Chemical mapping of a 177-nucleotide RNA with DMS and 2A3. For DMS, 2,937 sequencing reads were counted. Values cover nucleotides 27 to 126. Conditions: 150 mM KOAc, 10 mM MgCl2 and 150 mM bicine (pH 8.5), 24 C.
[RMDB]
RNA sequence: GGGAACGACUCGAGUAGAGUCGAAAAGAUAUGGAGUAAGGGCGACGAUCAUUAAGAGUCGGAAACGACUCAAUGGGAGCCUAUCUCCUAAGUCAAAGGUCUUAUAAUCUUCGGAUUAUAAGACCAACCUAAGCGGUAAGUUCGCUUACCGCUUAGGAAAAGAAACAACAACAACAAC
Reactivity to DMS in 0.01 (KOAc 150mM, MgCl2 10mM, bicine 150mM(pH8.5), 24C), signal-to-noise 3, nucleotides 027 to 126: g000a030u000a300u000g000g000a020g010u000a100a280g000g000g010c000g030a080c250g000a030u010c030a010u000u010a040a100g020a020g000u000c000g010g010a080a060a170c020g030a020c010u000c000a030a010u000g000g000g010a040g010c000c020u000a250u000c010u000c000c010u000a040a100g010u010c040a050a080a140g010g000u000c000u000u000a020u000a000a000u000c000u000u030c220g020g010a010u000u000a000u000a000a000g000a010c000c000a000a010
Reactivity to 2A3 in 0.01 (KOAc 150mM, MgCl2 10mM, bicine 150mM(pH8.5), 24C), signal-to-noise 4, nucleotides 027 to 126: g020a010u090a040u150g000g000a020g040u150a300a300g130g000g010c030g030a300c050g010a090u040c020a000u050u100a300a110g000a010g000u000c000g000g020a050a040a010c010g000a000c000u000c010a010a000u010g000g010g000a010g000c010c000u030a080u070c000u000c000c000u010a140a020g030u030c050a120a040a150g000g000u000c020u020u020a000u010a010a010u000c020u020u110c300g050g010a000u010u000a000u000a000a010g000a000c000c000a000a000